Chemical mapping of a 177-nucleotide RNA with 2A3. The data come from the RNA Mapping Database (RMDB), library RFM100.
RNA sequence: GGGAACGACUCGAGUAGAGUCGAAAAACGGCCUAGUGUACGCACUAGGCCGAAGUAAGUGGUGUAGAUGAAACAAAUUUACCAACAAUUUUGUUGGAUUGUUUCACCUAUCGUUCCAUUUGCAGAACAGACCCGUCGUAUUCGUACGACGGGUCUGAAAAGAAACAACAACAACAAC
Reactivity to 2A3 in 0.01 (KOAc 150mM, MgCl2 10mM, bicine 150mM(pH8.5), 24C), signal-to-noise 2, nucleotides 027 to 126: a000c010g000g010c000c000u010a000g000u000g020u020a040c180g030c120a000c000u000a000g000g000c000c000g000a000a010g000u020a050a020g000u000g000g030u040g010u000a000g000a020u000g000a000a000a000c010a000a010a100u190u170u160a130c000c010a000a000c030a100a130u100u180u110u270g000u010u000g000g010a010u000u020g020u000u000u000c000a000c010c000u040a020u070c030g160u100u010c000c000a010u010u000u020g000c010a010g060a290a080